Record summary
The record gives the reactivity of an RNA of 177 nucleotides to DMS and 2A3. It was measured as part of the RMDB library VIROID. DMS adducts were read by reverse transcription with MarathonRT.

RNA sequence: GGGAACGACUCGAGUAGAGUCGAAAAUGGAACCGCAGUUGGUUCCUCGGAACUAAACUCGUGGUUCCUGUGGUUCACACCUGACCUCCUGAGCAGAAAAGAAAAAAGAAGGCGGCUCGGAGGAGCGCUCUAACGCAAGGUUCGCCUUGCGUUAGAGAAAAGAAACAACAACAACAAC
Reactivity to DMS in 0.01 (KOAc 150mM, MgCl2 10mM, bicine 150mM(pH8.5), 24C), signal-to-noise 2, nucleotides 027 to 126: u000g000g030a000a000c010c020g040c000a060g010u000u000g030g010u000u000c000c030u000c180g020g010a030a020c000u010a030a040a030c010u000c150g060u010g000g010u000u000c000c000u000g020u010g020g030u010u000c100a130c080a120c100c050u000g010a140c020c010u010c000c010u010g020a050g030c050a130g000a080a090a110a080g020a020a050a040a060a130a120g000a140a090g020g020c140g000g010c000u010c020g000g030a070g000g010a050g000c100g010
Reactivity to 2A3 in 0.01 (KOAc 150mM, MgCl2 10mM, bicine 150mM(pH8.5), 24C), signal-to-noise 2, nucleotides 027 to 126: u030g000g000a020a000c020c000g000c010a000g000u010u040g000g010u010u010c000c000u030c130g020g000a010a010c020u100a270a040a070c010u140c190g060u040g010g040u010u020c000c000u030g000u020g020g100u140u150c080a050c000a010c090c050u080g090a100c010c020u040c010c040u170g000a000g000c060a030g200a090a120a130a000g200a070a140a050a040a060a030g100a050a030g140g090c140g070g000c040u000c000g020g010a010g010g000a010g010c040g000